[RMDB]
RNA sequence: GGGAACGACUCGAGUAGAGUCGAAAAUUUGCAUGGAGCACACCAGAAACGAGUACGCACCAAUCUAUGAUGUGUAGCUGCGGUAGGUAGAUCCAAGCAGUUCGUGAAUGAUGAUAGGUGCUCAUCAGUCCGUCGUCCAUUUCGAUGGACGAUGGACAAAAGAAACAACAACAACAAC
Reactivity to DMS in 0.01 (KOAc 150mM, MgCl2 10mM, bicine 150mM(pH8.5), 24C), signal-to-noise 5, nucleotides 027 to 126: u010u040u020g010c090a070u000g040g000a030g010c070a120c060a130c040c020a060g010a120a170a040c050g000a050g010u010a020c020g010c010a010c020c020a030a200u030c260u030a100u010g020a030u020g010u010g010u000a140g010c020u010g000c000g000g000u020a120g000g010u010a050g040a120u080c010c010a130a090g020c000a030g000u020u000c060g000u000g010a090a120u000g000a080u010g010a120u010a060g000g000u010g010c050u010c030a020u030c040a070
Reactivity to 2A3 in 0.01 (KOAc 150mM, MgCl2 10mM, bicine 150mM(pH8.5), 24C), signal-to-noise 8, nucleotides 027 to 126: u150u120u140g100c090a080u080g060g010a000g000c010a010c000a020c030c000a020g050a020a100a010c010g010a010g090u100a030c070g010c010a000c000c030a050a060u120c020u170a200u160g040a070u040g070u020g020u070a040g040c010u060g070c010g100g000u070a100g030g040u060a050g040a180u070c010c000a020a000g000c000a010g010u050u030c020g020u040g090a190a070u030g050a030u020g030a020u070a130g100g040u020g000c000u000c010a040u020c000a010
An RNA of 177 nucleotides, treated with DMS and 2A3 and read out base by base. The data come from the RNA Mapping Database (RMDB), library OK1LIB. 2A3 adducts were read by reverse transcription with SuperScript II with manganese. The reactions ran in a buffer of 150 mM KOAc, 10 mM MgCl2 and 150 mM bicine (pH 8.5), at 24 C. As a SHAPE reagent, 2A3 marks flexible, mostly unpaired nucleotides at the ribose 2'-OH.